[RMDB]
RNA sequence: GGGAACGACUCGAGUAGAGUCGAAAACUAACGCCGUUCGCGGCGUUAGAAAAAAACCUUUGUGACGAACAGGCGAGGAUCUCCACUCUCCCAUUGGGAGAUGGAGGGAGCCUUCCCGUCACUCUGGUAAAAAGCUCAUACGUUCGCGUAUGAGCAAUCUUGAUCAGACUUUCGAGUCUGAUCAAGAAAAAGAAACAACAACAACAAC
Reactivity to 2A3 in 0.01 (KOAc 150mM, MgCl2 10mM, bicine 150mM(pH8.5), 24C), signal-to-noise 1, nucleotides 027 to 156: c000u000a000a000c020g010c030c030g030u010u130c300g020c050g070g020c000g010u020u020a000g050a030a010a010a010a000a010a010c010c010u000u000u030g010u000g000a000c010g010a180a080c050a100g000g010c020g060a210g020g000a010u000c000u000c010c010a050c170u000c000u000c000c000c170a300u240u300g010g000g000a000g000a000u000g000g000a010g000g000g000a000g000c030c030u010u010c010c000c000g000u020c000a000c000u000c000u000g000g040u170a080a070a020a030a010g000c000u000c000a000u000a000c010g030u040u080c300g000c020g080u000a030u000g000a020g100c010a000a010